[RMDB]
RNA sequence: GGGAACGACUCGAGUAGAGUCGAAAAGAUAUGGAGUUCGUGCUACAGCGAGGAUCGCUCUUCGGAAACGAAGAGCGGGAGCUGGUCACGAGACUCCUAAGUCAAAAGUCGUGCUUCGGCACGACAACGUAUAGGGGUACUUCGGUACCCCUAUACGAAAAGAAACAACAACAACAAC
Reactivity to DMS in 0.01 (KOAc 150mM, MgCl2 10mM, bicine 150mM(pH8.5), 24C), signal-to-noise 3, nucleotides 027 to 126: g000a050u000a300u030g000g010a020g030u000u000c000g020u000g010c160u010a220c080a020g010c010g010a120g030g000a030u010c000g010c000u000c000u000u000c000g020g000a090a040a140c010g000a020a020g010a010g010c000g020g010g000a010g020c010u000g020g020u000c020a000c020g000a110g030a030c000u000c000c000u010a020a100g000u000c030a130a110a130a180g000u010c000g010u000g010c000u010u010c200g010g040c000a010c010g000a000c000a020a070
Reactivity to 2A3 in 0.01 (KOAc 150mM, MgCl2 10mM, bicine 150mM(pH8.5), 24C), signal-to-noise 2, nucleotides 027 to 126: g020a010u060a000u120g000g000a000g020u000u030c010g050u020g050c060u290a300c110a060g000c010g060a300g100g000a000u010c000g020c000u020c000u000u020c010g020g010a020a030a020c020g000a000a000g000a000g000c000g000g000g000a000g000c000u080g090g120u040c000a000c010g030a030g050a050c010u020c000c000u020a050a020g050u040c020a090a060a070a050g000u010c000g020u000g000c000u090u120c300g120g000c000a000c000g000a000c000a010a000
Chemical mapping of a 177-nucleotide RNA with DMS and 2A3. Conditions: 150 mM KOAc, 10 mM MgCl2 and 150 mM bicine (pH 8.5), 24 C. The 2A3 profile rests on 4,952 reads. The DMS profile rests on 3,474 reads. DMS adducts were read by reverse transcription with MarathonRT.